An RNA of 177 nucleotides, treated with DMS and read out base by base. Reactivities are given for positions 27 through 126. For DMS, 4,634 sequencing reads were counted. The RNA was probed in 150 mM KOAc, 10 mM MgCl2 and 150 mM bicine (pH 8.5) at 24 C.
RNA sequence: GGGAACGACUCGAGUAGAGUCGAAAAAUUGCACAAUCAUCAACAAGAGGGGGUAGUAGAGUUGAAGGAAUCUUUGCAGGAUUGUUUAUGAAUGCCUAUGGUUCAGGGCAAGUAAUGCUAAGAUGGGGCCUAUAAAUCAGUUCGCUGAUUUAUAGGCAAAAGAAACAACAACAACAAC
Reactivity to DMS in 0.01 (KOAc 150mM, MgCl2 10mM, bicine 150mM(pH8.5), 24C), signal-to-noise 4, nucleotides 027 to 126: a060u020u010g020c060a080c140a090a080u000c050a030u010c030a050a070c080a070a080g020a100g010g010g000g000g000u000a030g010u000a040g000a100g000u000u000g020a070a090g000g010a150a040u000c030u010u000u010g020c050a020g010g000a170u000u000g000u000u020u000a080u020g010a090a050u000g010c040c120u000a080u010g030g030u010u010c030a080g000g000g020c020a010a040g010u000a230a110u000g000c020u000a020a040g000a050u000g000g000g000